[RMDB]
RNA sequence: GGGAACGACUCGAGUAGAGUCGAAAAACACCGUGCAAAAAGCACGGAAGAGUCGUGCAAAGGACAGGCUCGACAGAAGCACGACAAAGCGAGCCAGGAAAAGACAGCGGGAAAACCGCUGUCGAAACGACAUGUUGCACUUCGGUGCAGCAUGUCGAAAAGAAACAACAACAACAAC
Reactivity to DMS in 0.01 (KOAc 150mM, MgCl2 10mM, bicine 150mM(pH8.5), 24C), signal-to-noise 3, nucleotides 027 to 126: a080c050a260c000c020g000u000g050c010a100a070a170a170a130g030c000a000c010g010g000a060a050g000a110g010u000c000g040u000g040c040a100a130a140g010g010a130c100a050g000g040c000u010c040g000a140c090a120g020a070a000g000c000a020c010g040a020c050a050a080a150g000c020g000a020g020c040c000a190g000g020a030a020a030a120g000a020c000a000g000c000g000g000g020a110a020a100a130c000c000g000c000u000g020u000c000g000a040a040a130
Reactivity to 2A3 in 0.01 (KOAc 150mM, MgCl2 10mM, bicine 150mM(pH8.5), 24C), signal-to-noise 4, nucleotides 027 to 126: a000c060a020c000c010g000u010g000c010a070a130a090a230a000g000c000a000c010g000g000a010a020g040a020g020u010c010g000u000g010c030a080a110a160g150g020a040c050a080g020g020c000u010c030g020a020c030a070g130a120a000g000c000a010c020g030a010c060a040a040a000g070c020g010a000g000c000c000a030g020g050a050a120a000a030g000a000c000a000g000c000g000g000g100a080a220a020a050c000c010g000c000u000g000u000c000g000a000a000a000